[RMDB]
RNA sequence: GGGAACGACUCGAGUAGAGUCGAAAACGCACGAUACUCGUUGAGCAGGCCCUGAAGCAUAUAGCUGAUGGAAAGAGGUUGCUAAUUUUGACACCAACGCGGGUCGUAAAGGAUGAAGUGCAGCGAGUCCUCAGGAGCGAUUCGUCGCUCCUGAGGAAAAAGAAACAACAACAACAAC
Reactivity to 2A3 in 0.01 (KOAc 150mM, MgCl2 10mM, bicine 150mM(pH8.5), 24C), signal-to-noise 1, nucleotides 027 to 126: c020g030c000a030c040g080a070u140a200c020u000c000g070u100u000g060a040g000c030a040g000g050c000c000c000u010g040a020a000g000c110a030u240a060u240a300g000c030u010g000a010u070g010g100a020a080a110g140a010g120g150u000u020g000c040u020a070a250u050u030u000u120g100a070c090a040c140c070a080a060c050g000c060g020g040g000u010c010g050u090a110a200a000g110g030a020u070g040a110a000g070u000g100c010a000g040c000g010a020g060
Reactivity to DMS in 0.01 (KOAc 150mM, MgCl2 10mM, bicine 150mM(pH8.5), 24C), signal-to-noise 2, nucleotides 027 to 126: c110g020c070a090c070g000a160u000a090c020u000c010g020u010u000g000a170g010c100a080g010g010c060c010c000u000g030a170a110g000c020a160u010a190u000a090g020c000u000g000a270u000g000g010a070a120a180g000a110g000g010u000u000g010c030u060a060a130u010u000u030u000g000a080c030a080c030c030a050a040c120g030c090g000g030g000u000c030g020u010a020a110a040g020g030a130u000g020a110a070g000u000g020c050a070g000c050g000a130g010

Structure probing data (2A3 and DMS) for a 177-nucleotide construct.
The RNA was probed in 150 mM KOAc, 10 mM MgCl2 and 150 mM bicine (pH 8.5) at 24 C.
For 2A3 the reverse transcriptase was SuperScript II with manganese.
For 2A3, 685 sequencing reads were counted.
As a SHAPE reagent, 2A3 marks flexible, mostly unpaired nucleotides at the ribose 2'-OH.